[RMDB]
RNA sequence: GGGAACGACUCGAGUAGAGUCGAAAACGAUCAUCACGGCGCUGGGCACCGGGAUCCACGACGAGUUCGAUAUCGGCAAGCUGCGCUACCACAAGAUCGUGCUGAUGGCCGACGCCGAUGUUGACGGGGGAGACUACCCGUUCGCGGGUAGUCUCCCAAAAGAAACAACAACAACAAC
Reactivity to 2A3 in 0.01 (KOAc 150mM, MgCl2 10mM, bicine 150mM(pH8.5), 24C), signal-to-noise 1, nucleotides 027 to 126: c010g000a090u080c000a020u010c070a020c070g010g020c010g020c060u110g050g000g000c020a060c110c040g000g030g090a050u000c000c000a080c010g120a000c040g020a010g090u130u050c010g020a070u040a040u150c000g050g000c020a140a000g060c100u200g080c070g000c000u010a040c000c070a020c050a050a080g110a080u180c050g060u010g000c020u050g000a130u060g130g030c020c020g010a010c000g030c000c000g040a050u040g010u000u000g040a070c000g000g000
Annotation: Structure probing data (2A3) for a 177-nucleotide construct. 2A3 is a SHAPE reagent: it acylates the 2'-hydroxyl of flexible nucleotides of all four kinds. The RNA was probed in 150 mM KOAc, 10 mM MgCl2 and 150 mM bicine (pH 8.5) at 24 C.